[RMDB]
RNA sequence: GGGAACGACUCGAGUAGAGUCGAAAAUCAGAAUCAGGCCGGAGUGUUUAGCGCUCCGUAAACACGGUCGUACAUCCAGCCGGUAGCCUGGUUCCUUGCAUUGAGUGGUGUACGGAGUUUAUAGAGCAAAAGAAAGACCUGUUCGCAGGUCUUUCAAGCUAGCUAAUAACUUCGGUUAUUAGCUAGCAAAAGAAACAACAACAACAAC
Reactivity to 2A3 in 0.01 (KOAc 150mM, MgCl2 10mM, bicine 150mM(pH8.5), 24C), signal-to-noise 3, nucleotides 027 to 156: u130c020a020g000a000a010u000c000a000g000g000c010c000g020g010a010g020u060g050u090u190u270a180g080c050g000c010u000c010c010g000u030a010a030a000c130a010c070g030g010u040c020g020u020a010c010a070u040c040c040a010g020c030c000g060g020u020a020g000c000c010u000g000g000u000u000c010c010u070u070g060c010a120u050u140g030a040g060u070g000g020u020g000u020a020c030g050g010a050g000u050u140u060a150u080a060g100a030g080c070a070a050a100a020g010a010a000a000g000a000c000c000u020g000u030u020c130g010c070a000g010g000u000c000u000u010u000c000a000a000
Reactivity to DMS in 0.01 (KOAc 150mM, MgCl2 10mM, bicine 150mM(pH8.5), 24C), signal-to-noise 1, nucleotides 027 to 156: u000c040a040g020a050a050u000c010a050g040g020c000c020g000g000a040g050u010g010u000u000u000a260g030c080g030c010u100c000c010g030u010a030a050a180c090a130c080g020g000u000c000g000u000a050c020a050u000c050c030a190g030c020c050g000g000u000a070g020c010c000u010g020g020u010u020c020c020u000u000g010c130a160u000u000g020a140g060u010g020g020u010g020u000a020c050g010g010a090g000u000u000u010a120u010a100g000a140g020c070a120a080a170a170g010a010a000a020g020a010c000c000u000g000u000u010c300g050c000a010g020g000u000c000u000u010u000c010a020a180
An RNA of 207 nucleotides, treated with 2A3 and DMS and read out base by base. Source: RMDB library M2RFOK, as collected in RNAgym. 2A3 adducts were read by reverse transcription with SuperScript II with manganese. The RNA was probed in 150 mM KOAc, 10 mM MgCl2 and 150 mM bicine (pH 8.5) at 24 C.